[RMDB]
RNA sequence: GGGAACGACUCGAGUAGAGUCGAAAAUUGAUGAUGUUAUACAAACUGCAGCUAAUGAUUUAGACUUGACAUUGUCUCAGUAUUGUAUGUAUUUGAAGAAUUGUCAGGUUCGCUGGACCACUAAACGUCCAACACCUAAGUUCGCUUAGGUGUUGGAAAAAGAAACAACAACAACAAC
Reactivity to DMS in 0.01 (KOAc 150mM, MgCl2 10mM, bicine 150mM(pH8.5), 24C), signal-to-noise 4, nucleotides 027 to 126: u000u010g010a090u000g010a060u000g020u020u010a060u000a050c090a030a040a060c060u000g010c090a030g000c030u000a070a030u000g000a120u000u010u010a130g010a070c170u000u000g010a070c010a020u000u020g010u000c010u000c010a020g010u000a070u000u000g010u000a050u010g000u000a030u000u010u010g020a090a090g000a040a030u000u000g000u000c010a010g000g010u000u000c140g020c100u000g000g000a080c030c040a070c130u000a040a080a110c280g010
Reactivity to 2A3 in 0.01 (KOAc 150mM, MgCl2 10mM, bicine 150mM(pH8.5), 24C), signal-to-noise 3, nucleotides 027 to 126: u090u080g000a020u020g010a000u040g050u170u180a050u000a070c040a000a070a020c050u090g020c080a000g000c000u080a100a020u130g140a100u090u080u160a080g030a060c030u010u070g000a020c030a030u020u070g090u030c010u000c010a040g000u040a070u280u090g100u060a080u050g030u000a020u020u130u090g070a110a050g050a040a030u040u010g010u040c000a010g010g000u040u040c060g040c130u070g040g020a040c010c000a040c020u120a110a120a020c050g020
The data come from the RNA Mapping Database (RMDB), library OK2TST. The record gives the reactivity of an RNA of 177 nucleotides to DMS and 2A3. The 2A3 profile rests on 2,057 reads. 2A3 adducts were read by reverse transcription with SuperScript II with manganese. DMS adducts were read by reverse transcription with MarathonRT. The RNA was probed in 150 mM KOAc, 10 mM MgCl2 and 150 mM bicine (pH 8.5) at 24 C.